[RMDB]
RNA sequence: GGGAACGACUCGAGUAGAGUCGAAAAUUAUCCUUUGAGGUAACGACAGGUGCAGGUCCUGAAAUCGUGUGGAGGCAUGAACUUUAGGCGAUGAAAAGGAGAAUAACAGCUAUUUCGUUCUUUUGAACUCACUUACUUUGUUCGCAAAGUAAGUGAGAAAAGAAACAACAACAACAAC
Reactivity to DMS in 0.01 (KOAc 150mM, MgCl2 10mM, bicine 150mM(pH8.5), 24C), signal-to-noise 4, nucleotides 027 to 126: u000u000a120u010c010c000u010u000u010g020a110g010g010u000a020a040c070g010a080c190a040g010g010u000g010c060a070g000g010u000c020c020u000g010a080a120a040u000c040g010u010g010u010g010g000a060g000g020c070a090u010g010a070a100c060u000u000u000a090g010g010c030g010a060u000g010a030a060a160a070g010g010a060g010a080a050u010a070a060c100a090g020c090u000a090u000u000u010c080g000u000u000c020u000u000u000u010g010a080a220
Reactivity to 2A3 in 0.01 (KOAc 150mM, MgCl2 10mM, bicine 150mM(pH8.5), 24C), signal-to-noise 3, nucleotides 027 to 126: u060u020a080u080c000c000u020u070u130g090a070g000g000u060a050a020c050g020a010c030a030g050g000u070g080c020a010g000g090u020c000c000u010g000a090a060a020u030c030g020u080g060u030g120g020a050g030g000c080a110u140g030a120a050c000u050u050u070a050g010g040c020g040a040u070g070a080a030a080a020g050g030a040g030a070a030u100a120a010c030a010g020c030u050a090u060u090u080c060g040u000u010c040u040u080u030u110g090a090a050